This 207-nucleotide RNA was probed chemically with 2A3 and DMS. The reactions ran in a buffer of 150 mM KOAc, 10 mM MgCl2 and 150 mM bicine (pH 8.5), at 24 C. 2A3 adducts were read by reverse transcription with SuperScript II with manganese. The data come from the RNA Mapping Database (RMDB), library RNAMAK.

RNA sequence: GGGAACGACUCGAGUAGAGUCGAAAAGGGGUCUCGUGGUCUUCUCCCACAAGCGAAGAACGUAUACUGAAGCCUCCACGGUAUACGGGAGCUUGUGUGAGAGAAGGCCACGAGACGGAGGCACCCAAACUUUGUGGUGCUUCGGCACCACAAAGAACAUUGUUUAAUUGUUCGCAAUUAAACAAUGAAAAGAAACAACAACAACAAC
Reactivity to 2A3 in 0.01 (KOAc 150mM, MgCl2 10mM, bicine 150mM(pH8.5), 24C), signal-to-noise 2, nucleotides 027 to 156: g030g000g000g010u020c000u000c000g000u000g010g010u000c010u030u010c000u030c010c010c000a010c000a000a000g000c020g210a280a010g010a060a060c000g010u000a000u000a000c000u010g060a180a020g020c000c010u010c010c000a010c000g020g000u000a000u000a010c020g000g010g010a020g000c010u000u010g000u000g000u110g020a300g000a000g000a020a010g000g000c000c000a010c000g000a000g000a000c000g000g000a000g010g000c010a060c010c010c020a050a070a140c000u000u000u000g000u000g010g000u000g000c000u010u030c150g060g000c000a000c000c000a000c010a000a000a000g000a010a010
Reactivity to DMS in 0.01 (KOAc 150mM, MgCl2 10mM, bicine 150mM(pH8.5), 24C), signal-to-noise 2, nucleotides 027 to 156: g010g040g020g010u000c010u020c000g030u010g050g030u000c010u000u010c000u000c000c010c000a070c000a030a020g010c020g000a180a160g010a180a200c020g000u000a010u000a010c000u000g000a050a150g030c080c010u000c030c000a300c030g000g000u000a010u000a000c060g030g010g000a140g020c010u000u020g020u000g000u020g010a170g030a040g000a040a000g010g000c010c000a000c030g010a010g000a010c030g000g040a050g040g010c010a130c010c010c000a100a110a160c030u000u000u000g030u000g030g010u000g030c000u010u000c300g060g030c000a020c010c000a020c000a000a010a030g000a100a300